[RMDB]
RNA sequence: GGGAACGACUCGAGUAGAGUCGAAAACUGGCACCGACCACAGCACAACCACCGCCAAUGGCGCGCGCGUUUGACCGGUUGGGCAGCUUCGGCACCGAUCGCGCCAUCAUCGCCGCGUGCCCGUCGACUAUGAGCUUCACUUCGGUGAAGCUCAUAGAAAAGAAACAACAACAACAAC
Reactivity to DMS in 0.01 (KOAc 150mM, MgCl2 10mM, bicine 150mM(pH8.5), 24C), signal-to-noise 2, nucleotides 027 to 126: c050u000g010g010c100a080c100c030g020a100c060c050a080c080a100g000c090a060c050a120a080c020c020a100c070c060g010c060c070a080a140u000g010g020c020g020c030g010c040g000c050g000u010u000u000g000a030c010c040g000g010u010u010g000g010g000c150a120g020c010u010u010c100g030g000c020a160c100c020g030a030u000c000g030c170g000c020c020a050u000c110a050u010c020g020c060c030g010c020g010u010g000c000c000c130g000u010c050g000a180
Reactivity to 2A3 in 0.01 (KOAc 150mM, MgCl2 10mM, bicine 150mM(pH8.5), 24C), signal-to-noise 1, nucleotides 027 to 126: c020u020g040g000c000a030c020c050g040a040c010c000a040c040a040g020c020a020c000a040a040c010c020a000c010c000g000c030c030a100a060u150g000g010c020g000c010g070c020g050c020g040u090u020u000g020a030c000c000g000g010u020u010g040g060g000c100a120g020c000u040u080c140g140g000c050a030c000c020g030a030u010c010g000c000g010c110c000a050u100c000a010u090c020g100c100c040g040c020g020u030g040c000c020c000g080u050c000g030a030
The data come from the RNA Mapping Database (RMDB), library OK2TST.
The record gives the reactivity of an RNA of 177 nucleotides to DMS and 2A3.
For 2A3 the reverse transcriptase was SuperScript II with manganese.
The RNA was probed in 150 mM KOAc, 10 mM MgCl2 and 150 mM bicine (pH 8.5) at 24 C.